[RMDB]
RNA sequence: GGGAACGACUCGAGUAGAGUCGAAAACGUUGGUGGUGCCGUUGCCCAGUUGCAGCGUGCCGGCGCUGAUCGUCGUGCCACCCGUGUAGGUAUUCGCGCCGGCCAGGACCAGGGUCCCGAGGUCGUCCGGGCCGGAUGAUUUCGAUCAUCCGGCCCGAAAAGAAACAACAACAACAAC
Reactivity to 2A3 in 0.01 (KOAc 150mM, MgCl2 10mM, bicine 150mM(pH8.5), 24C), signal-to-noise 1, nucleotides 027 to 126: c020g000u000u060g000g000u000g000g000u020g000c020c000g020u000u000g150c000c000c000a100g120u170u260g090c100a000g020c000g250u230g020c000c000g030g040c000g010c130u170g030a040u090c090g100u030c050g000u090g000c000c010a030c000c000c050g050u100g110u280a220g100g060u090a220u030u090c000g000c070g000c000c000g110g040c000c000a050g020g000a050c020c070a080g020g020g050u030c000c060c000g030a100g160g000u080c110g000u010c040